[RMDB]
RNA sequence: GGGAACGACUCGAGUAGAGUCGAAAAAGGCCGAGGCGGUGAGAACCCCGCGAGACCUGGAAGCGGUGGAAGAGGACGAUCCCGGGACACCCGCGACGGCCGAGAUCCAGGGCGUGUUGAGGCGCUAUGGAUUUAUUUACUUCGGUAAAUAAAUCCAAAAAGAAACAACAACAACAAC
Reactivity to 2A3 in 0.01 (KOAc 150mM, MgCl2 10mM, bicine 150mM(pH8.5), 24C), signal-to-noise 4, nucleotides 027 to 126: a010g010g030c000c010g010a090g100g020c040g000g050u100g020a160g020a060a050c020c000c010c010g000c000g010a050g040a070c020c030u010g020g030a060a050g050c010g050g090u300g110g030a080a050g030a060g090g000a030c060g070a080u090c030c030c000g000g050g000a050c050a050c020c020c020g000c030g050a030c010g000g000c010c000g020a020g000a010u020c010c010a010g010g040g000c020g010u100g070u080u160g080a110g040g020c020g000c010u020a110
Reactivity to DMS in 0.01 (KOAc 150mM, MgCl2 10mM, bicine 150mM(pH8.5), 24C), signal-to-noise 6, nucleotides 027 to 126: a090g000g020c000c020g010a080g000g020c020g020g010u010g010a120g010a140a110c040c010c010c010g000c050g010a130g000a170c020c020u000g000g000a100a200g000c030g000g000u040g010g010a080a050g000a100g000g010a260c080g030a080u010c020c000c010g000g000g000a270c080a270c090c000c020g010c030g020a150c020g000g000c010c000g000a070g010a090u010c010c010a050g000g020g000c050g010u000g000u000u000g000a100g000g010c020g000c040u010a100